An RNA of 177 nucleotides, treated with DMS and read out base by base. The reactions ran in a buffer of 150 mM KOAc, 10 mM MgCl2 and 150 mM bicine (pH 8.5), at 24 C. Source: RMDB library TTRINS, as collected in RNAgym.

[RMDB]
RNA sequence: GGGAACGACUCGAGUAGAGUCGAAAAGAUAUGGAAUAAAUUAGUUGUCUGAGAGCUUUUGACGAAGUCGGGAUCGGAAACGAUCCUCCCUUCGAUAAGCUCCAGACAACUAAUUUAUUCCUAAGUCGAUUAAAUGUUACUUCGGUAACAUUUAAUCAAAAGAAACAACAACAACAAC
Reactivity to DMS in 0.01 (KOAc 150mM, MgCl2 10mM, bicine 150mM(pH8.5), 24C), signal-to-noise 3, nucleotides 027 to 126: g010a110u010a300u000g010g000a040a000u000a010a010a000u000u000a000g000u000u000g000u000c000u000g010a200g020a010g030c010u000u000u000u000g020a300c170g000a010a010g030u000c220g000g010g010a010u000c000g010g000a120a130a220c020g010a020u000c010c000u000c100c060c000u000u000c000g000a160u000a010a010g010c000u000c000c010a010g010a000c000a000a000c000u000a000a000u010u000u000a010u000u000c000c000u010a020a100g020u020c110